The record gives the reactivity of an RNA of 177 nucleotides to 2A3 and DMS. For DMS, 3,833 sequencing reads were counted. Reactivities are given for positions 27 through 126. Conditions: 150 mM KOAc, 10 mM MgCl2 and 150 mM bicine (pH 8.5), 24 C.
[RMDB]
RNA sequence: GGGAACGACUCGAGUAGAGUCGAAAAGCUGGGCACCGAUGCGGCCAGCGAAGACAUCUCCCACGGAUGUGCCGGAGUUGUCGAUUAGCAGCUUGACUCUCCGGUUGGACCGAGUCUUGCUGCGAAAGGGAUGCUUCUCGUUCGCGAGGAGCAUCCCAAAAGAAACAACAACAACAAC
Reactivity to 2A3 in 0.01 (KOAc 150mM, MgCl2 10mM, bicine 150mM(pH8.5), 24C), signal-to-noise 2, nucleotides 027 to 126: g000c000u030g000g040g000c060a200c100c010g040a020u220g080c030g070g170c030c000a030g000c000g000a080a030g040a000c000a010u010c020u000c040c000c000a010c060g180g050a020u110g000u030g120c080c070g000g000a000g020u020u040g070u010c000g000a000u000u000a010g000c000a000g020c000u000u010g000a000c000u010c000u000c000c010g260g000u060u200g090g050a030c090c130g000a000g010u010c000u040u000g000c000u000g000c000g010a040a020a000
Reactivity to DMS in 0.01 (KOAc 150mM, MgCl2 10mM, bicine 150mM(pH8.5), 24C), signal-to-noise 2, nucleotides 027 to 126: g040c010u000g000g020g010c040a150c030c130g040a160u030g000c090g010g000c010c010a020g000c020g020a070a080g020a000c100a070u000c030u000c010c020c020a050c030g000g000a110u010g010u010g010c050c140g020g000a040g010u000u000g010u000c020g000a120u000u030a150g000c000a000g000c010u000u000g000a000c000u030c010u040c020c000g030g020u030u070g000g020a090c230c080g020a020g000u000c000u000u000g000c000u000g000c030g000a030a050a120